[RMDB]
RNA sequence: GGGAACGACUCGAGUAGAGUCGAAAAGCUAGCCUCUGCACCGAUGGGCCUUAACGUCGGGUCUGGCAACAGACAGCAGAGUCAUUAGCAAGGAUCGCGUUCUGUAGGGUCACUUUACAGAACGUUAAACAAUAGGUGACUCGCCUGCCAUCAGCCCGUACCUAAACGGGUUCGCCCGUUUAGGUACAAAAGAAACAACAACAACAAC
Reactivity to 2A3 in 0.01 (KOAc 150mM, MgCl2 10mM, bicine 150mM(pH8.5), 24C), signal-to-noise 3, nucleotides 027 to 156: g020c020u030a010g020c010c000u010c010u010g000c010a020c020c000g010a010u010g020g110g130c040c070u190u240a120a050c020g010u010c000g010g040g000u000c010u000g010g000c020a040a030c010a050g010a010c010a010g020c000a000g010a030g010u000c050a160u050u090a000g010c040a050a020g090g020a080u100c070g010c000g000u000u010c010u000g000u000a010g000g030g060u160c050a040c170u060u060u000a010c000a000g010a000a000c020g010u010u080a050a050a010c090a040a060u060a090g000g020u020g040a090c020u010c090g020c010c010u030g000c020c010a050u050c030a050g030c000c000c020
Reactivity to DMS in 0.01 (KOAc 150mM, MgCl2 10mM, bicine 150mM(pH8.5), 24C), signal-to-noise 1, nucleotides 027 to 156: g000c040u000a110g010c230c000u010c050u000g050c060a300c050c080g040a030u020g000g000g040c050c110u010u000a100a100c070g040u010c050g010g090g040u040c030u010g010g030c300a080a220c030a140g010a000c000a220g000c000a060g000a050g000u010c010a030u010u010a080g000c050a100a220g000g050a070u000c050g040c000g130u010u020c000u010g000u000a050g000g000g000u000c100a060c000u000u000u000a020c010a000g000a000a000c000g040u000u000a040a010a110c090a090a100u000a110g010g000u020g020a050c010u000c050g030c090c000u000g000c020c010a050u000c020a100g040c020c010c070